[RMDB]
RNA sequence: GGGAACGACUCGAGUAGAGUCGAAAAGAUAUGGAUGACAGGAAGACCGAUAAGCUGUGUUUCGGAAACGAAACCAGCUUUUGACGGUCGCUGUCAUCCUAAGUCAAAAGUGUCCUUCGGGACACAACGACACAGAGUAGUUCGCUACUCUGUGUCGAAAAGAAACAACAACAACAAC
Reactivity to DMS in 0.01 (KOAc 150mM, MgCl2 10mM, bicine 150mM(pH8.5), 24C), signal-to-noise 2, nucleotides 027 to 126: g000a030u000a290u010g000g000a000u000g000a020c010a000g020g030a160a140g000a000c000c000g020a150u020a000a030g040c010u000g020u030g020u000u000u000c010g000g000a080a060a120c000g020a000a000a000c000c010a000g010c000u000u000u000u020g010a170c060g000g000u000c000g000c000u000g010u000c000a000u000c000c000u010a000a040g000u000c030a090a070a080a140g010u000g000u000c000c010u000u000c190g070g010g000a020c010a000c010a050a120
Reactivity to 2A3 in 0.01 (KOAc 150mM, MgCl2 10mM, bicine 150mM(pH8.5), 24C), signal-to-noise 1, nucleotides 027 to 126: g000a010u050a040u080g000g000a010u030g000a020c010a020g130g300a300a250g110a130c020c100g090a130u060a230a010g010c030u020g100u040g000u300u010u030c000g000g020a000a080a000c010g000a000a000a000c000c000a000g010c020u000u000u000u000g030a000c000g000g030u000c000g030c000u000g000u000c000a000u030c000c000u020a060a000g020u010c040a000a000a200a200g010u000g000u000c020c000u100u150c300g130g000g020a020c000a000c000a030a000
Structure probing data (DMS and 2A3) for a 177-nucleotide construct. The 2A3 profile rests on 2,263 reads. The DMS profile rests on 2,198 reads.